[RMDB]
RNA sequence: GGGAACGACUCGAGUAGAGUCGAAAAGAAUCGCAGUUCGCUGCGAUUCAAAUAAAAUCAGCGGAAAGGAGGCGUAAAAUAUUACCGCUGAACGCCUCCUUAAAACUACGUCCUUCGGGACGUAGAAGAUGUAAUAUCUGUUCGCAGAUAUUACAUCAAAAGAAACAACAACAACAAC
Reactivity to 2A3 in 0.01 (KOAc 150mM, MgCl2 10mM, bicine 150mM(pH8.5), 24C), signal-to-noise 7, nucleotides 027 to 126: g000a000a000u000c000g010c000a000g010u050u080c120g050c110u000g000c000g000a000u000u010c000a000a000a000u070a000a010a000a030u080c020a010g040c020g110g040a150a030a010g000g000a000g000g000c010g010u030a040a110a120a070u210a080u110u150a050c020c020g020c030u020g040a000a000c000g000c000c000u000c000c000u000u030a000a000a000a010c000u000a000c000g000u000c000c000u020u060c210g080g000g000a000c000g000u000a000g000a000a010
Reactivity to DMS in 0.01 (KOAc 150mM, MgCl2 10mM, bicine 150mM(pH8.5), 24C), signal-to-noise 6, nucleotides 027 to 126: g000a010a000u000c000g010c000a020g020u010u010c200g040c000u000g010c010g020a010u000u000c000a030a080a070u010a060a050a090a090u010c090a060g010c080g010g000a110a070a020g010g000a000g000g010c000g000u000a050a070a080a090u000a080u010u010a140c060c030g000c050u000g000a070a030c010g010c010c000u000c010c000u000u000a000a030a090a160c000u000a000c010g010u000c000c000u000u010c190g020g010g000a000c000g010u000a000g000a040a070
This 177-nucleotide RNA was probed chemically with 2A3 and DMS.
The data come from the RNA Mapping Database (RMDB), library M2PK50.
The 2A3 profile rests on 23,043 reads.
2A3 adducts were read by reverse transcription with SuperScript II with manganese.